This 207-nucleotide RNA was probed chemically with DMS and 2A3. For 2A3, 7,961 sequencing reads were counted. Reactivities are rounded to 0.1 and cut off at 0 and 3. 2A3 adducts were read by reverse transcription with SuperScript II with manganese. The RNA was probed in 150 mM KOAc, 10 mM MgCl2 and 150 mM bicine (pH 8.5) at 24 C. Values cover nucleotides 27 to 156.
[RMDB]
RNA sequence: GGGAACGACUCGAGUAGAGUCGAAAAGCGUACUACGGUCGGGAGAGCUUGGAUUUAUGGGAGUCCCAUGUCCCAAAUAGGACAUGAACCUCCCAUUGUCAGCUCUCACGACCGUAUCGCAAACCUGACUCACAACGAUUCGUCGUUGUGAGUCAGGGUGUAAUAGUUGGUUCGCCAACUAUUACACAAAAGAAACAACAACAACAAC
Reactivity to DMS in 0.01 (KOAc 150mM, MgCl2 10mM, bicine 150mM(pH8.5), 24C), signal-to-noise 2, nucleotides 027 to 156: g000c020g010u010a030c070u010a020c000g000g010u000c000g010g000g010a030g010a010g010c020u000u000g010g020a050u000u000u000a010u020g010g020g020a060g020u000c030c060c000a020u000g010u000c000c000c010a060a140a250u000a060g010g010a040c000a010u000g000a040a060c070c010u000c000c000c000a020u000u000g010u010c030a060g010c000u000c010u000c010a000c000g000a030c010c000g010u000a000u000c000g000c020a060a100a250c000c010u000g000a030c010u010c000a030c000a000a010c020g020a060u010u000c300g000u010c010g000u000u000g020u000g000a010g020u010c000a000g000g010
Reactivity to 2A3 in 0.01 (KOAc 150mM, MgCl2 10mM, bicine 150mM(pH8.5), 24C), signal-to-noise 6, nucleotides 027 to 156: g010c000g040u090a080c080u010a000c030g030g020u010c020g000g090g010a020g000a010g010c040u120u160g180g020a110u200u300u180a030u030g000g010g030a010g050u100c000c040c000a000u000g010u000c030c010c030a160a300a120u300a120g010g000a000c000a000u000g020a040a050c010c000u010c000c000c000a000u000u000g000u000c000a000g000c000u090c110u110c120a000c000g000a000c000c000g000u000a000u020c000g010c000a020a030a020c000c000u000g000a000c000u000c010a000c000a000a010c000g010a010u060u060c170g060u010c000g000u130u000g000u000g000a000g000u000c000a000g000g000